[RMDB]
RNA sequence: GGGAACGACUCGAGUAGAGUCGAAAAAACAGGGUCUCCUCUAUAUGCCUCAGGAGCUGGCAUCUUGUGACAGUGUUGUAACAUUCGAGCUUACUGAUGUUGUGCAUUGCCGUAUGGCGGCCCCCAGUACCCUCAUUAACUUCGGUUAAUGAGGGUAAAAAGAAACAACAACAACAAC
Reactivity to 2A3 in 0.01 (KOAc 150mM, MgCl2 10mM, bicine 150mM(pH8.5), 24C), signal-to-noise 2, nucleotides 027 to 126: a000a000c040a030g030g000g000u000c000u010c070c010u010c030u020a110u040a000u150g030c000c000u040c030a030g000g090a090g020c020u010g040g000c020a030u010c040u090u110g070u080g040a020c010a090g040u030g070u230u050g030u060a030a000c000a020u060u130c100g010a090g020c060u050u110a090c030u100g020a040u050g000u080u010g000u030g010c010a050u010u110g010c060c000g090u100a110u170g070g010c000g010g020c000c000c030c000c000a020g030
Reactivity to DMS in 0.01 (KOAc 150mM, MgCl2 10mM, bicine 150mM(pH8.5), 24C), signal-to-noise 3, nucleotides 027 to 126: a080a030c110a070g010g010g000u000c020u000c010c010u000c060u000a070u010a060u010g010c030c010u000c060a100g010g000a060g010c040u000g000g020c080a030u000c080u000u010g020u000g010a060c060a070g020u000g030u000u010g010u000a040a030c070a080u010u010c100g000a090g010c090u010u000a070c060u000g010a040u010g020u000u000g000u010g010c030a060u000u010g010c010c030g010u010a090u010g010g010c020g010g010c000c010c000c010c020a160g010
Source: RMDB library OK2TRN, as collected in RNAgym. Chemical mapping of a 177-nucleotide RNA with 2A3 and DMS. Reactivities are given for positions 27 through 126. Reactivities are rounded to 0.1 and cut off at 0 and 3. The DMS profile rests on 3,542 reads.